Source: RMDB library OK1LIB, as collected in RNAgym. This 177-nucleotide RNA was probed chemically with 2A3 and DMS. The RNA was probed in 150 mM KOAc, 10 mM MgCl2 and 150 mM bicine (pH 8.5) at 24 C.
[RMDB]
RNA sequence: GGGAACGACUCGAGUAGAGUCGAAAAGCUCUGCGGGACAGAUCGAACAACAAAGAGAGAUCGAAAAUCUUAGAGGAGAGAACGAAUCUGUCGACUUCACUAGGACAUUGUCGAUCAGAGGUCCAAAGACGAAUCAUGGGUUCGCCUAUGGUUCGUCAAAAGAAACAACAACAACAAC
Reactivity to 2A3 in 0.01 (KOAc 150mM, MgCl2 10mM, bicine 150mM(pH8.5), 24C), signal-to-noise 9, nucleotides 027 to 126: g020c010u000c010u020g030c050g040g000g020a010c010a020g020a020u020c020g040a060a050c020a050a010c020a020a270a010g100a010g010a000g010a030u020c020g040a030a020a020a060u000c010u010u020a010g010a040g050g010a010g000a010g030a070a030c020g030a070a120u120c100u160g080u040c030g060a140c000u020u020c010a010c040u020a010g000g020a010c020a110u080u130g070u030c010g010a020u030c020a010g030a030g070g040u010c010c000a040a050a010
Reactivity to DMS in 0.01 (KOAc 150mM, MgCl2 10mM, bicine 150mM(pH8.5), 24C), signal-to-noise 9, nucleotides 027 to 126: g000c020u000c000u010g010c090g000g000g000a060c070a070g000a020u000c020g000a110a160c060a070a100c300a070a120a080g000a080g010a210g000a050u010c020g000a050a060a100a190u000c010u000u000a010g010a070g000g000a020g000a110g000a130a030c030g000a090a100u040c080u040g000u000c010g000a290c000u000u000c020a100c020u000a020g000g000a030c140a090u020u010g010u000c010g000a090u010c010a050g000a070g000g000u010c020c030a050a080a110